[RMDB]
RNA sequence: GGGAACGACUCGAGUAGAGUCGAAAACUACGCUUCGGCGUAGGCUCGCGCGUACUACAACGCUUUGAUCAUCACUUGGACGAUAAGUCCCAAAUAGGACUUUUGACGUCCUUGGGAUGGGAGCGUUGUAUCGCCUAACGAAGGGUUCGCCCUUCAACUACUUGAAACAAUUCGUUGUUUCAAGUAGAAAAGAAACAACAACAACAAC
Reactivity to DMS in 0.01 (KOAc 150mM, MgCl2 10mM, bicine 150mM(pH8.5), 24C), signal-to-noise 3, nucleotides 027 to 156: c000u010a000c000g030c000u010u010c300g060g020c010g020u000a010g010g000c040u000c070g030c110g040c040g030u000a090c140u010a060c020a010a010c000g020c000u000u000u040g000a240u010c000a030u000c020a070c050u000u000g000g020a040c000g020a170u000a020a040g020u000c000c010c010a040a110a230u000a060g000g000a020c000u000u000u010u010g020a220c100g000u000c000c000u000u000g000g000g020a030u010g020g000g030a040g000c020g020u000u000g020u010a010u000c040g000c000c080u000a100a110c140g000a060a030g000g000g000u000u010c080g020c000c000c010u000u000c010a000a280
Reactivity to 2A3 in 0.01 (KOAc 150mM, MgCl2 10mM, bicine 150mM(pH8.5), 24C), signal-to-noise 9, nucleotides 027 to 156: c000u010a000c000g010c010u050u090c300g160g000c000g000u000a000g000g010c020u060c040g090c010g000c010g040u110a150c060u010a000c030a000a010c010g020c000u090u090u070g260a280u210c010a000u000c000a000c040u010u020g010g000a000c010g060a070u020a100a010g020u020c000c020c020a100a300a160u260a160g000g000a000c000u050u050u060u180g200a110c020g000u000c000c000u000u000g010g000g000a000u000g000g030g000a000g000c000g000u000u000g000u000a000u030c010g000c000c020u080a150a040c120g010a010a000g030g000g010u060u150c230g160c000c000c000u010u000c000a010a000
Chemical mapping of a 207-nucleotide RNA with DMS and 2A3.
The DMS profile rests on 9,710 reads.
It was measured as part of the RMDB library RNAMAK.
The reactions ran in a buffer of 150 mM KOAc, 10 mM MgCl2 and 150 mM bicine (pH 8.5), at 24 C.
High 2A3 reactivity points to a flexible backbone, as in loops and unpaired stretches.